[RMDB]
Background: Structure probing data (2A3 and DMS) for a 177-nucleotide construct. The 2A3 profile rests on 5,310 reads. It was measured as part of the RMDB library TTRDEL. Conditions: 150 mM KOAc, 10 mM MgCl2 and 150 mM bicine (pH 8.5), 24 C.
RNA sequence: GGGAACGACUCGAGUAGAGUCGAAAAGAUAUGGAGCCAGUAGGGAGCUUACUCGGAAACGAGCGGAGCGAAGAACUACAGGCUCCUAAGUCAAAUCUCUUAAUGUCCUUCGGGACAUUAAGAGAAAGCUAGAUAUUGAGUUCGCUCAAUAUCUAGCAAAAGAAACAACAACAACAAC
Reactivity to 2A3 in 0.01 (KOAc 150mM, MgCl2 10mM, bicine 150mM(pH8.5), 24C), signal-to-noise 2, nucleotides 027 to 126: g040a010u070a010u170g010g000a000g020c010c010a000g020u010a010g000g040g070a030g000c010u000u020a020c000u000c000g000g020a070a060a040c010g000a010g000c300g180g000a000g020c020g040a300a030g020a050a020c000u010a010c030a030g020g000c000u000c000c000u000a010a000g020u000c020a070a070a180u020c000u000c000u000u000a030a000u000g000u000c000c010u020u060c300g040g000g000a000c000a000u000u000a000a000g010a000g000a000a010a010
Reactivity to DMS in 0.01 (KOAc 150mM, MgCl2 10mM, bicine 150mM(pH8.5), 24C), signal-to-noise 3, nucleotides 027 to 126: g000a030u000a300u010g000g000a010g020c010c000a050g020u000a010g020g000g020a150g020c000u000u000a070c000u010c000g010g010a100a120a120c000g030a020g000c020g010g000a000g010c010g020a080a090g010a160a170c010u000a020c000a060g010g020c000u000c000c010u010a010a070g000u000c010a080a140a170u000c010u000c000u000u000a000a010u000g000u000c000c000u000u020c170g020g000g000a010c000a000u000u000a000a000g000a010g010a010a030a100